[RMDB]
RNA sequence: GGGAACGACUCGAGUAGAGUCGAAAAAGAACCUUUGUUGUAGAUAAGUCUUUGUCAAUUGAGGAGUUUGCUGACGUAGUAAAGGAACAAGUCUCAGACUUGCUUGUUAAAUUACUGCGUGGAAUGCGUAAAAUAACUAGUUCGCUAGUUAUUUUACAAAAGAAACAACAACAACAAC
Reactivity to 2A3 in 0.01 (KOAc 150mM, MgCl2 10mM, bicine 150mM(pH8.5), 24C), signal-to-noise 2, nucleotides 027 to 126: a000g050a040a100c020c000u020u050u090g050u030u030g040u060a040g060a120u060a090a080g090u050c010u000u080u100g150u090c020a090a090u080u090g030a040g080g060a060g060u050u160u170g030c040u030g030a000c000g000u010a000g000u000a010a040a020g080g020a030a010c000a000a040g030u010c050u020c170a090g060a240c040u040u040g010c000u010u020g020u010u020a010a070a030u000u010a000c010u000g000c050g000u060g000g100a120a030u100g020c000
Reactivity to DMS in 0.01 (KOAc 150mM, MgCl2 10mM, bicine 150mM(pH8.5), 24C), signal-to-noise 8, nucleotides 027 to 126: a060g000a130a130c020c010u000u000u000g010u000u000g010u000a090g010a060u000a060a120g010u000c060u000u000u000g010u000c070a070a110u010u000g010a080g010g000a150g010u000u000u000g020c040u000g000a020c010g020u000a010g000u000a010a020a060g000g010a020a020c000a000a010g010u000c130u010c200a170g010a070c140u000u010g000c020u000u000g000u000u000a030a050a080u000u000a010c010u000g000c010g010u000g010g010a070a060u000g010c180
Background:
Structure probing data (2A3 and DMS) for a 177-nucleotide construct. For DMS, 14,868 sequencing reads were counted. It was measured as part of the RMDB library 15KREP.